[RMDB]
RNA sequence: GGGAACGACUCGAGUAGAGUCGAAAACGGAAGCAUUAAAACCAUUCGAGCUAGUCAAUGAGUGGCGUGUCUCUCCGCAGCGUGUUGGCGAAUGUAAAGAGUGACUAAGCAUGUAGUACCGAGGAUGAUAAGAGCAAUUCGUUCGCGAAUUGCUCAAGCUGAAAUAACCCUUCGGGGUUAUUUCAGCAAAAGAAACAACAACAACAAC
Reactivity to 2A3 in 0.01 (KOAc 150mM, MgCl2 10mM, bicine 150mM(pH8.5), 24C), signal-to-noise 1, nucleotides 027 to 156: c020g000g010a020a010g030c000a000u070u060a080a000a060a130c020c020a000u040u020c020g030a000g080c090u060a040g120u160c070a040a030u050g040a030g060u110g000g010c080g010u040g010u000c020u050c050u010c080c030g000c040a040g020c030g030u050g030u090u100g050g000c030g020a130a020u060g020u210a140a020a000g150a010g010u040g010a010c010u050a060a010g020c030a010u070g050u130a060g000u000a100c040c010g000a010g020g020a000u060g010a010u100a170a020g010a000g020c000a010a000u010u000c000g010u090u080c190g000c020g150a040a010u020u020g000c000u000c000a000a000

Chemical mapping of a 207-nucleotide RNA with 2A3.
Values cover nucleotides 27 to 156.
High 2A3 reactivity points to a flexible backbone, as in loops and unpaired stretches.
The data come from the RNA Mapping Database (RMDB), library M2RFPK.